[RMDB]
RNA sequence: GGGAACGACUCGAGUAGAGUCGAAAAGAGGAUUCAACGAGCUUCGUAGCAACGAUAGCAACGUAGCUUUUGCUACGACCCGAGCUAUCGAGGGUAGCUACGUCCCCUGCUCGAGGGGAGAAUCCGACGUACGAGUAUCCUUCGGGAUACUCGUACGAAAAGAAACAACAACAACAAC
Reactivity to 2A3 in 0.01 (KOAc 150mM, MgCl2 10mM, bicine 150mM(pH8.5), 24C), signal-to-noise 2, nucleotides 027 to 126: g080a020g040g000a000u020u000c030a050a060c070g200a040g060c060u050u040c000g010u000a000g000c000a020a080c000g000a010u010a000g040c000a040a070c010g000u010a010g000c000u200u250u300u300g020c010u000a010c010g030a050c060c030c030g030a030g000c000u010a000u040c020g010a100g080g170g080u090a040g000c020u020a000c000g000u000c000c000c010c010u020g050c040u060c050g130a010g020g030g000g020a030g000a020a010u010c000c050g000a010
Reactivity to DMS in 0.01 (KOAc 150mM, MgCl2 10mM, bicine 150mM(pH8.5), 24C), signal-to-noise 2, nucleotides 027 to 126: g010a170g010g000a040u000u000c020a060a070c060g010a130g030c130u000u000c010g030u000a010g000c020a130a210c030g000a020u000a010g010c010a120a230c000g000u000a000g010c020u000u000u000u010g060c010u020a020c000g000a100c140c170c080g000a150g000c010u000a000u000c000g000a160g010g000g010u010a080g000c010u000a020c000g000u000c010c000c000c030u010g010c040u000c040g010a030g010g000g000g010a030g010a010a020u010c020c000g010a300